Structure probing data (2A3 and DMS) for a 170-nucleotide construct. Conditions: 150 mM KOAc, 10 mM MgCl2 and 150 mM bicine (pH 8.5), 24 C. 2A3 adducts were read by reverse transcription with SuperScript II with manganese. The data come from the RNA Mapping Database (RMDB), library 15KLIB. The DMS profile rests on 84,661 reads. For DMS the reverse transcriptase was MarathonRT.
RNA sequence: GGGAACGACUCGAGUAGAGUCGAAAACCCCCGUCCGAGAGAAGGGAGACUCCGGAACUCCUGCCAUUUGAGGGACGAAGCCGCCACCGGGCGCUCCCCUCGGACCUCCUCUGGAGGGGUUCACAUCGCCGUGUAUUCUUCGGAAUACACAAAAGAAACAACAACAACAAC
Reactivity to 2A3 in 0.01 (KOAc 150mM, MgCl2 10mM, bicine 150mM(pH8.5), 24C), signal-to-noise 9, nucleotides 027 to 129: c000c000c000c000c010g070u030c010c020g050a040g000a000g010a090a100g030g030g000a030g020a020c030u030c050c040g040g010a020a020c010u020c010c010u070g290c030c040a120u070u060u140g040a050g010g010g000a010c030g020a030a010g050c080c040g050c040c010a170c090c060g100g030g000c030g010c010u070c000c000c000c000u010c000g000g010a010c000c000u020c000c000u080c050u050g010g010a030g010g000g000g000u030u050c050a060c010a100u160c090g050c110c040
Reactivity to DMS in 0.01 (KOAc 150mM, MgCl2 10mM, bicine 150mM(pH8.5), 24C), signal-to-noise 9, nucleotides 027 to 129: c010c030c010c070c070g020u000c050c000g010a040g020a010g040a110a080g000g000g000a030g030a070c070u000c050c020g020g010a030a030c030u030c020c020u030g040c060c060a020u040u040u050g010a050g010g010g000a040c050g040a060a060g000c080c010g000c010c010a170c150c140g030g030g030c060g000c090u030c030c020c000c030u020c040g000g000a020c000c020u000c010c010u020c050u060g020g010a070g030g010g020g000u040u000c050a060c090a090u060c100g000c170c100